[RMDB]
This 177-nucleotide RNA was probed chemically with 2A3 and DMS. For DMS the reverse transcriptase was MarathonRT. The 2A3 profile rests on 9,246 reads. Reactivities are given for positions 27 through 126. 2A3 adducts were read by reverse transcription with SuperScript II with manganese. The reactions ran in a buffer of 150 mM KOAc, 10 mM MgCl2 and 150 mM bicine (pH 8.5), at 24 C.
RNA sequence: GGGAACGACUCGAGUAGAGUCGAAAAAGGACCUGUAGUGGAGGCAGUUGGCACCCAGGCGCUGUCAUGGGAGGCCGCCCUUAGAAGAUAUUGGCCUAGAGCCUUUGAUGCAAGGGUCGGCAUCAGGCUCAAUAAGCCAUUUCGAUGGCUUAUUGAGAAAAGAAACAACAACAACAAC
Reactivity to 2A3 in 0.01 (KOAc 150mM, MgCl2 10mM, bicine 150mM(pH8.5), 24C), signal-to-noise 5, nucleotides 027 to 126: a000g080g020a080c020c020u050g060u120a100g040u080g100g060a040g020g000c020a020g030u150u190g100g000c020a050c020c010c010a020g070g000c050g020c060u050g030u050c030a070u090g070g020g010a050g040g020c010c000g010c010c000c000u020u040a080g020a130a010g010a040u120a040u200u120g010g000c000c020u060a120g020a070g060c010c000u030u030u040g050a040u050g000c010a010a040g040g020g010u180c080g010g000c000a000u030c010a010g050g000
Reactivity to DMS in 0.01 (KOAc 150mM, MgCl2 10mM, bicine 150mM(pH8.5), 24C), signal-to-noise 7, nucleotides 027 to 126: a080g000g010a110c030c020u000g010u010a070g020u010g010g000a080g000g010c050a040g010u000u010g020g020c040a090c020c020c030a130g000g010c050g020c070u000g000u000c030a110u000g010g010g010a110g010g000c020c010g010c010c000c010u000u000a090g010a060a070g000a180u000a030u010u000g010g010c010c020u010a110g010a160g010c000c000u000u000u000g010a140u000g010c050a040a050g000g000g010u010c040g030g000c000a050u000c030a080g000g000